An RNA of 177 nucleotides, treated with 2A3 and DMS and read out base by base.
RNA sequence: GGGAACGACUCGAGUAGAGUCGAAAAACUAGUAUGUACAGGGGUGAGUUGACCUGUCAUCUAGACUGCUGACCAUCAACUCACCGGUCAGCUGGAUGAUGGCCACAGAGUACGACAUCAGUACUCAGAGUAUUGACUAGUUCGCUGGUCGAUACUCAAAAGAAACAACAACAACAAC
Reactivity to 2A3 in 0.01 (KOAc 150mM, MgCl2 10mM, bicine 150mM(pH8.5), 24C), signal-to-noise 9, nucleotides 027 to 126: a000c010u020a010g070u120a070u090g080u090a020c020a030g040g030g040g050u140g070a120g050u070u080g120a150c010c020u010g010u000c000a000u000c000u010a020g080a130c050u050g000c010u010g010a010c010c000a050u110c040a050a080c050u030c090a060c030c040g000g010u010c000a000g000c010u020g020g010a020u070g010a020u050g060g020c020c010a060c040a050g010a000g010u000a000c030g080a030c080a160u110c040a050g000u000a000c000u000c010a000
Reactivity to DMS in 0.01 (KOAc 150mM, MgCl2 10mM, bicine 150mM(pH8.5), 24C), signal-to-noise 9, nucleotides 027 to 126: a180c010u010a020g010u050a020u010g000u060a010c020a020g000g010g000g010u010g010a050g030u000u010g000a070c030c030u000g010u000c000a000u000c010u000a020g000a180c090u000g000c020u010g010a020c010c080a140u020c080a050a070c080u020c080a070c160c150g000g010u000c010a010g010c010u000g000g000a020u010g000a070u010g000g000c030c040a080c190a100g000a020g010u000a010c010g010a160c200a110u040c140a110g010u000a000c000u000c010a110
For 2A3, 65,054 sequencing reads were counted. For DMS, 53,854 sequencing reads were counted. 2A3 adducts were read by reverse transcription with SuperScript II with manganese. DMS adducts were read by reverse transcription with MarathonRT. The RNA was probed in 150 mM KOAc, 10 mM MgCl2 and 150 mM bicine (pH 8.5) at 24 C.